[RMDB]
Structure probing data (DMS and 2A3) for a 177-nucleotide construct. The reactions ran in a buffer of 150 mM KOAc, 10 mM MgCl2 and 150 mM bicine (pH 8.5), at 24 C. For 2A3, 1,189 sequencing reads were counted. It was measured as part of the RMDB library OK2TST. Reactivities are given for positions 27 through 126.

RNA sequence: GGGAACGACUCGAGUAGAGUCGAAAAGAAAGAAUAUUCGUUAUAGCCCAUCGCUUCAUAGGCUUUUAAGCGAUCAAUGACUUCUUGGGCUUGCCCAAUCACGUUAUUUUUGCGCAUCGCCUCAGGAGGCGAUAGGACUGUUCGCAGUCCUAUCGCCAAAAGAAACAACAACAACAAC
Reactivity to DMS in 0.01 (KOAc 150mM, MgCl2 10mM, bicine 150mM(pH8.5), 24C), signal-to-noise 2, nucleotides 027 to 126: g010a060a090a110g010a170a110u010a070u000u000c070g000u000u000a110u000a110g010c010c020c020a070u000c070g020c040u000u000c090a120u020a030g030g030c040u000u000u000u000a080a070g010c000g000a020u000c130a020a070u000g010a020c050u000u000c120u000u000g010g000g020c060u020u000g000c040c010c020a010a050u000c140a060c170g000u000u000a040u000u010u000u000u030g030c080g000c050a050u000c170g020c000c000u000c230a120g010g020a220
Reactivity to 2A3 in 0.01 (KOAc 150mM, MgCl2 10mM, bicine 150mM(pH8.5), 24C), signal-to-noise 2, nucleotides 027 to 126: g070a030a020a000g140a070a090u160a150u220u090c050g010u150u180a120u130a150g020c010c000c010a020u030c040g020c020u020u030c010a110u090a110g120g000c050u160u100u040u200a050a000g000c000g040a050u050c050a050a050u040g030a030c000u050u000c000u120u000g000g000g000c020u020u050g040c050c020c010a010a000u060c050a060c110g010u040u020a050u050u090u000u060u180g060c000g000c000a060u040c020g010c000c010u040c030a040g110g000a030